The record gives the reactivity of an RNA of 207 nucleotides to 2A3. Conditions: 150 mM KOAc, 10 mM MgCl2 and 150 mM bicine (pH 8.5), 24 C. Source: RMDB library RNAMAK, as collected in RNAgym. For 2A3 the reverse transcriptase was SuperScript II with manganese. The 2A3 profile rests on 1,078 reads.
RNA sequence: GGGAACGACUCGAGUAGAGUCGAAAAGCAGUGAUUCGUCACUGCAAAAAGAUAUGGAUUCUCUCCCCACCCUACGGAACUACUUGCUUGUUCGGAAACGAACAAUCAAGCCGUAGGAGGAGAAUCCUAAGUCAAAAAAGCGAGCUUCGGCUCGCAACACUGGAAAAGACUUCGGUCUUUUCCAGUGAAAAGAAACAACAACAACAAC
Reactivity to 2A3 in 0.01 (KOAc 150mM, MgCl2 10mM, bicine 150mM(pH8.5), 24C), signal-to-noise 2, nucleotides 027 to 156: g000c000a000g000u000g000a020u060u230c210g050u040c090a000c000u000g000c000a110a050a000a000a000g100a060u230a030u060g000g000a000u000u000c000u010c030u110c050c040c000c020a010c000c000c000u000a000c000g000g060a070a040c030u190a050c000u240u000g020c000u010u010g000u000u000c000g040g020a100a060a060c010g000a010a000c000a000a000u020c000a000a010g000c000c000g000u000a000g000g000a020g020g000a000g000a010a000u010c000c000u010a070a030g080u090c060a000a100a020a050a140a040g100c000g010a000g000c020u070u140c190g060g000c000u000c000g000c000a010a000